[RMDB]
RNA sequence: GGGAACGACUCGAGUAGAGUCGAAAAUCAAAGCUCACUGCAGCCUCAAACUCCUGGGCUCAAGCAAUUCGCCUACCUCGACCUCCCCAAGUACAGGGAUUACAGGCAUGAGCCACCACACCCAGCUAAUUUUUUUAACUUUUUGUAGAGAUGGUGAAAUGAUAAAUAGCUUCGGCUAUUUAUCAUUAAAAGAAACAACAACAACAAC
Reactivity to 2A3 in 0.01 (KOAc 150mM, MgCl2 10mM, bicine 150mM(pH8.5), 24C), signal-to-noise 2, nucleotides 027 to 156: u110c030a090a120a020g020c030u030c030a090c100u100g000c060a010g010c010c010u100c090a100a060a090c030u060c040c010u070g050g000g030c030u050c050a030a040g000c010a020a130u120u060c040g020c020c020u010a030c030c060u040c050g110a140c030c030u020c000c020c020c010a060a000g040u040a060c030a060g080g000g000a010u030u090a070c050a030g030g000c000a030u110g020a010g010c010c000a020c000c000a010c000a020c030c000c000a000g020c030u050a060a080u050u040u000u000u000u030u180a060a070c010u060u090u010u040u020g000u020a040g020a020g000a030u020g000g020u060g020a080
Reactivity to DMS in 0.01 (KOAc 150mM, MgCl2 10mM, bicine 150mM(pH8.5), 24C), signal-to-noise 2, nucleotides 027 to 156: u000c050a070a100a110g000c020u000c020a090c040u000g000c030a140g030c010c040u050c090a070a140a110c030u010c040c030u000g000g040g040c000u020c020a050a080g010c080a060a130u000u000c030g030c000c000u000a020c000c000u010c000g030a130c020c030u010c020c050c000c020a060a110g000u010a090c130a200g010g020g000a090u000u000a030c040a030g000g010c010a080u010g010a140g010c050c010a050c020c030a060c040a100c020c060c010a110g020c040u040a010a000u010u030u000u050u030u000u000a020a090c060u010u000u000u010u010g010u000a070g000a090g010a050u000g000g020u000g010a080